Chemical mapping of a 177-nucleotide RNA with 2A3 and DMS. For 2A3 the reverse transcriptase was SuperScript II with manganese. DMS adducts were read by reverse transcription with MarathonRT. Conditions: 150 mM KOAc, 10 mM MgCl2 and 150 mM bicine (pH 8.5), 24 C. For DMS, 13,846 sequencing reads were counted. For 2A3, 13,563 sequencing reads were counted.
[RMDB]
RNA sequence: GGGAACGACUCGAGUAGAGUCGAAAAUCGUUUGCUGUUAUUCGCCCUCAAAGAAGAGCGUCCUAGAUAUUAAGACUAUAUAUAUUUGUGGGUGUAUAGUGUUGUCGGGGUGCAGACACAGGAGACGGGAUAAUAUAUUAUUCGUAAUAUAUUAUCCAAAAGAAACAACAACAACAAC
Reactivity to 2A3 in 0.01 (KOAc 150mM, MgCl2 10mM, bicine 150mM(pH8.5), 24C), signal-to-noise 9, nucleotides 027 to 126: u110c010g010u010u020u030g100c010u020g010u070u050a060u070u100c010g010c010c010c000u030c040a100a090a030g110a050a020g040a030g050c020g020u010c010c010u060a090g040a090u100a080u130u190a120a020g020a030c030u010a010u010a020u010a010u010a070u210u060u060g090u090g020g040g000u020g030u020a030u030a060g070u080g040u080u070g030u040c040g000g030g000g000u020g000c010a020g020a050c030a000c010a050g030g020a010g010a010c030g020
Reactivity to DMS in 0.01 (KOAc 150mM, MgCl2 10mM, bicine 150mM(pH8.5), 24C), signal-to-noise 5, nucleotides 027 to 126: u050c050g000u010u000u000g010c010u000g000u010u010a090u020u010c030g000c000c000c000u000c050a040a050a080g010a130a070g000a100g000c070g010u000c000c020u000a060g010a090u020a070u030u010a060a160g010a080c030u010a090u010a030u030a050u000a070u000u010u000g010u010g010g000g030u000g020u010a030u010a060g000u020g010u010u000g020u020c080g010g000g010g010u020g010c070a060g000a090c110a040c040a040g000g000a070g000a030c080g010